RNA sequence: GGGAACGACUCGAGUAGAGUCGAAAACUUGGGAUAUUUUCAGAGAGGUCAACAGCGGUCUCCAGGCAUGUUUAAUGCUCAGUUAGAGAAUUCCCAGCUGUAGUCUGAAUAAGAUAUUGCCUGCACCUAGAAAUCUAACUUUCGAGUUAGAUUUCUAAAAAGAAACAACAACAACAAC
Reactivity to DMS in 0.01 (KOAc 150mM, MgCl2 10mM, bicine 150mM(pH8.5), 24C), signal-to-noise 3, nucleotides 027 to 126: c100u010u000g000g000g010a070u000a020u000u000u010u000c020a110g010a170g000a130g010g000u000c060a070a100c110a080g020c080g010g000u010c010u010c030c010a150g010g000c000a010u010g010u000u010u010a100a040u010g010c010u010c070a060g030u010u000a080g000a050g010a090a090u000u010c100c010c000a120g020c090u000g020u010a070g020u000c010u010g010a090a070u000a070a110g010a020u000a050u000u000g010c030c000u000g020c210a110c140c070
Reactivity to 2A3 in 0.01 (KOAc 150mM, MgCl2 10mM, bicine 150mM(pH8.5), 24C), signal-to-noise 2, nucleotides 027 to 126: c000u040u050g010g040g000a000u030a060u180u050u070u000c050a050g050a010g020a020g300g030u030c030a090a010c040a120g060c020g070g000u030c010u000c020c000a000g000g040c000a000u030g040u160u300u200a110a000u040g040c000u010c120a090g020u060u180a030g000a010g020a060a090u130u040c020c030c000a070g000c010u020g000u060a040g030u020c030u020g020a030a040u110a150a020g000a070u030a030u030u070g180c000c000u030g010c000a020c000c000